[RMDB]
RNA sequence: GGGAACGACUCGAGUAGAGUCGAAAAGAUAUGGAGCCUCCCCACCGCUGUAGAGCGUUGAAAUCGGAAACGAUGGAGCUUGAGGGCGAGGGCUCCUAAGUCAAACGCACAACUUCGGUUGUGCGAACCCUCUACACAAGUUCGCUUGUGUAGAGGGAAAAGAAACAACAACAACAAC
Reactivity to 2A3 in 0.01 (KOAc 150mM, MgCl2 10mM, bicine 150mM(pH8.5), 24C), signal-to-noise 2, nucleotides 027 to 126: g060a050u090a100u230g030g000a000g010c000c010u110c050c040c000c020a060c030c000g020c120u180g030u080a010g010a010g010c040g090u290u040g000a010a040a000u010c010g050g000a000a070a000c000g000a010u020g010g020a020g000c020u020u030g010a190g080g060g020c010g000a000g000g030g000c030u030c000c010u010a210a010g100u030c100a140a020a050c010g020c000a000c010a010a000c010u050u070c300g190g000u000u000g000u000g000c000g000a000a000
Reactivity to DMS in 0.01 (KOAc 150mM, MgCl2 10mM, bicine 150mM(pH8.5), 24C), signal-to-noise 3, nucleotides 027 to 126: g020a100u000a170u000g000g000a000g010c000c010u010c090c010c000c030a300c120c020g010c010u010g000u000a210g000a020g020c010g000u000u010g000a060a120a030u000c000g000g010a090a080a100c010g000a020u000g000g000a110g030c000u000u000g000a170g000g000g010c020g010a120g020g000g000c010u010c000c000u000a020a080g010u010c070a080a090a170c010g000c000a010c000a010a000c000u000u010c240g030g010u020u000g000u020g000c000g010a030a040

An RNA of 177 nucleotides, treated with 2A3 and DMS and read out base by base. The RNA was probed in 150 mM KOAc, 10 mM MgCl2 and 150 mM bicine (pH 8.5) at 24 C. The 2A3 profile rests on 5,081 reads.